RNA sequence: GGGAACGACUCGAGUAGAGUCGAAAAACCCGGUCGCUCCCUUCCCGCUAAAUCCCCUUCGGGGUCAGUGCGCUACCAGCACAGGGCCGCACGCCUCUCCUGCUAGCCGUGUGGCUCUUAAAGAGCCCUCCUCUUAUAACUUCGGUUAUAAGAGGAGAAAAGAAACAACAACAACAAC
Reactivity to DMS in 0.01 (KOAc 150mM, MgCl2 10mM, bicine 150mM(pH8.5), 24C), signal-to-noise 3, nucleotides 027 to 126: a130c010c010c020g000g000u000c020g030c020u000c020c000c010u000u000c000c010c010g020c160u020a050a100a130u000c030c000c000c070u010u020c140g020g010g000g000u000c100a030g010u000g000c030g000c100u010a100c120c080a090g010c050a060c080a080g010g000g030c040c000g000c020a020c030g000c160c020u000c030u010c060c040u000g020c070u000a060g010c080c030g000u000g020u000g000g010c000u000c000u010u000a050a090a090g010a100g010c050c080
Reactivity to 2A3 in 0.01 (KOAc 150mM, MgCl2 10mM, bicine 150mM(pH8.5), 24C), signal-to-noise 1, nucleotides 027 to 126: a000c000c000c000g000g000u010c000g020c040u050c000c010c060u000u030c020c000c000g040c030u090a040a070a300u180c010c000c000c000u070u100c120g040g000g000g010u030c040a010g020u000g020c020g050c030u040a110c050c030a010g000c040a030c010a030g000g020g010c000c000g000c010a010c000g040c000c000u040c050u000c010c020u020g030c080u060a060g030c020c000g020u000g000u010g020g010c000u030c000u050u150a090a110a020g000a010g000c010c030